Conditions: 150 mM KOAc, 10 mM MgCl2 and 150 mM bicine (pH 8.5), 24 C. This 177-nucleotide RNA was probed chemically with DMS and 2A3. DMS adducts were read by reverse transcription with MarathonRT. 2A3 adducts were read by reverse transcription with SuperScript II with manganese.
RNA sequence: GGGAACGACUCGAGUAGAGUCGAAAAGAUAUGGAUUAAUAGUCGAGAAGGCGUUCGGAAACGAACGCAACUUCGAUGAGACUCAUUAAUCCUAAGUCAAACUCGUUUCAGUUCGCUGAAACGAGAAGGAAAUAUAAGUCUUCGGACUUAUAUUUCCAAAAGAAACAACAACAACAAC
Reactivity to DMS in 0.01 (KOAc 150mM, MgCl2 10mM, bicine 150mM(pH8.5), 24C), signal-to-noise 3, nucleotides 027 to 126: g000a000u000a020u020g000g010a000u000u000a010a000u010a010g000u000c000g000a020g010a020a020g020g000c000g010u000u000c000g010g010a000a000a020c000g010a010a000c000g020c020a010a040c020u000u010c000g020a220u030g020a100g000a020c000u000c240a020u000u000a010a010u000c000c000u000a000a070g000u000c010a160a110a270c000u000c000g000u000u000u000c000a020g010u000u010c290g030c000u010g010a000a010a010c000g000a000g010a040a120
Reactivity to 2A3 in 0.01 (KOAc 150mM, MgCl2 10mM, bicine 150mM(pH8.5), 24C), signal-to-noise 2, nucleotides 027 to 126: g000a000u010a000u060g000g000a000u020u000a000a020u010a010g020u010c030g010a010g010a250a000g050g020c000g020u000u000c010g000g000a000a010a000c010g000a000a020c000g000c020a020a050c000u010u010c000g040a070u300g000a010g000a000c000u000c090a000u000u020a010a000u000c000c010u000a000a000g000u000c010a020a010a230c010u000c000g010u000u020u000c020a050g020u050u100c290g000c180u010g000a010a010a010c010g010a000g000a000a030